[RMDB]
RNA sequence: GGGAACGACUCGAGUAGAGUCGAAAACUCUGCAUAUUCGUAUGCAGAGAAAUAACGGUCGGCUGAUGCAGCUAGUCGAACAUGCUGCUCGACCUUUUGGUAAAAACCGGAGGUUCGCCUCCGGUAAUAGUAUAAUUCCGUUCGCGGAAUUAUACUAAAAAGAAACAACAACAACAAC
Reactivity to 2A3 in 0.01 (KOAc 150mM, MgCl2 10mM, bicine 150mM(pH8.5), 24C), signal-to-noise 1, nucleotides 027 to 126: c000u010c000u010g000c000a010u010a070u110u110c130g090u060a010u020g000c000a010g000a010g020a010a050a000u090a060a010c050g010g000u030c000g000g060c150u240g060a070u220g020c000a000g030c000u040a050g120u110c080g040a040a020c020a020u080g000c000u010g020c020u020c010g000a010c000c000u040u150u010u110g030g060u100a000a050a020a080a020c020c000g000g000a010g000g030u030u080c190g010c040c020u000c040c050g000g000u000a000a000
Reactivity to DMS in 0.01 (KOAc 150mM, MgCl2 10mM, bicine 150mM(pH8.5), 24C), signal-to-noise 4, nucleotides 027 to 126: c000u000c000u010g000c010a010u000a010u000u020c200g030u000a000u000g000c000a010g000a010g000a010a070a060u010a070a070c150g010g000u000c010g000g000c180u000g010a050u020g000c010a040g000c010u010a270g010u010c200g010a090a240c120a110u010g010c000u000g010c010u000c010g000a010c000c000u000u000u000u010g010g010u010a050a070a060a110a040c000c000g000g000a020g010g000u000u010c270g010c000c000u000c000c000g000g000u010a000a010